RNA sequence: GGGAACGACUCGAGUAGAGUCGAAAAGGGCCUGCCUCGUCACAAGAUUGUGUCCAAGUGCAAGAGAAUGGGGGGAGGCUUUGGAGGGAAGGAGACGAGGAGCUGCUUCAUCGCCGCGUACGUGGCCAUUUGGUCAAGGUUUCGACCUUGACCAAAUAAAAGAAACAACAACAACAAC
Reactivity to DMS in 0.01 (KOAc 150mM, MgCl2 10mM, bicine 150mM(pH8.5), 24C), signal-to-noise 2, nucleotides 027 to 126: g000g010g020c050c060u000g000c030c010u010c020g020u000c040a120c110a100a090g000a140u000u010g030u010g010u010c070c120a050a090g020u000g000c070a070a060g000a190g000a120a070u010g000g010g010g010g000g000a060g010g000c150u000u010u000g000g020a140g010g000g010a120a060g010g000a110g000a030c020g000a050g030g010a100g030c040u000g000c070u000u010c140a060u010c180g000c000c050g020c040g000u020a030c160g010u010g000g000c050c150
Reactivity to 2A3 in 0.01 (KOAc 150mM, MgCl2 10mM, bicine 150mM(pH8.5), 24C), signal-to-noise 1, nucleotides 027 to 126: g000g000g000c000c070u110g010c000c000u030c040g000u040c020a020c020a090a120g190a220u080u140g030u030g060u180c090c000a080a040g050u030g110c050a120a000g060a020g150a290a180u150g000g000g020g000g000g060a060g000g000c000u060u090u020g050g000a040g070g000g000a090a040g020g080a120g000a000c000g000a010g000g020a010g000c060u060g010c000u030u050c020a070u060c050g020c020c010g040c020g050u100a120c100g040u040g030g010c010c010